Description
Structure probing data (DMS and 2A3) for a 177-nucleotide construct. The data come from the RNA Mapping Database (RMDB), library OK1LIB. The reactions ran in a buffer of 150 mM KOAc, 10 mM MgCl2 and 150 mM bicine (pH 8.5), at 24 C.
RNA sequence: GGGAACGACUCGAGUAGAGUCGAAAAGUGGUCGAGUGCGAAGCACUGGGGUAGAGAAAUAAAAAGAUAGAGAUCUGCCCCGUCAGUCAGUCACUCUCUGUCUGAAUCUCUCUCUCAAAGACCACGACCCAUAAUGGCUCUUCGGAGCCAUUAUGGGAAAAGAAACAACAACAACAAC
Reactivity to DMS in 0.01 (KOAc 150mM, MgCl2 10mM, bicine 150mM(pH8.5), 24C), signal-to-noise 3, nucleotides 027 to 126: g030u010g000g010u010c000g010a040g020u000g020c010g000a130a170g000c020a000c000u000g010g000g000g000u050a010g050a010g010a020a070a130u070a060a080a100a150a040g000a010u000a020g000a000g010a040u010c020u010g010c080c030c030c140g020u040c120a140g000u040c000a030g040u010c140a070c160u000c010u000c000u000g000u000c010u020g000a160a120u000c030u000c020u000c020u000c000u000c020a050a040a110g000a010c010c000a000c000g000a130
Reactivity to 2A3 in 0.01 (KOAc 150mM, MgCl2 10mM, bicine 150mM(pH8.5), 24C), signal-to-noise 3, nucleotides 027 to 126: g010u000g000g010u010c020g000a000g000u020g020c050g190a170a080g020c010a010c030u030g020g000g010g010u150a010g020a000g040a010a150a050u210a060a090a070a050a000g010a020u040a000g020a010g000a010u080c010u040g000c010c060c010c000g050u040c020a010g030u030c000a000g000u010c060a040c080u000c000u000c000u000g000u020c000u010g050a090a070u010c010u020c000u000c000u000c010u010c060a160a060a000g000a000c000c000a000c000g010a000